[RMDB]
RNA sequence: GGGAACGACUCGAGUAGAGUCGAAAAUGAUACGAUGACGAGUAUGAAAAAGUAAAGAGGAUUUAUUACCGUUUUUAAGUACAUGUUUUAUGUACUUACUAAUUCGUAAUGAAUCGAUUUCUUUAUUCCGCUAAGUAAAUUUCGAUUUACUUAGCGGAAAAGAAACAACAACAACAAC
Reactivity to 2A3 in 0.01 (KOAc 150mM, MgCl2 10mM, bicine 150mM(pH8.5), 24C), signal-to-noise 5, nucleotides 027 to 126: u110g020a020u020a050c040g070a070u090g120a030c090g000a040g080u070a030u130g130a090a050a030a050a000g130u170a070a090a040g130a030g100g000a000u030u000u000a000u000u000a000c010c000g000u000u000u000u000u000a000a000g000u010a000c000a000u020g250u140u150u090u180a010u010g000u010a000c000u010u000a010c010u010a000a040u080u120c030g000u000a010a000u010g010a000a000u010c010g020a020u030u020u030c000u000u050u040a160u120u000
Reactivity to DMS in 0.01 (KOAc 150mM, MgCl2 10mM, bicine 150mM(pH8.5), 24C), signal-to-noise 1, nucleotides 027 to 126: u070g010a100u000a030c050g030a070u000g040a140c140g010a110g060u010a070u030g050a020a130a130a130a080g000u000a010a020a090g020a080g020g000a030u000u000u000a000u000u000a010c000c220g040u000u000u000u000u000a000a000g000u010a000c000a000u000g000u030u010u030u080a000u000g000u000a010c000u000u000a000c000u010a000a000u000u020c250g030u000a000a000u000g010a030a010u000c000g000a110u030u010u000c020u010u000u040a120u000u000
The record gives the reactivity of an RNA of 177 nucleotides to 2A3 and DMS. For 2A3 the reverse transcriptase was SuperScript II with manganese. Values cover nucleotides 27 to 126. The RNA was probed in 150 mM KOAc, 10 mM MgCl2 and 150 mM bicine (pH 8.5) at 24 C.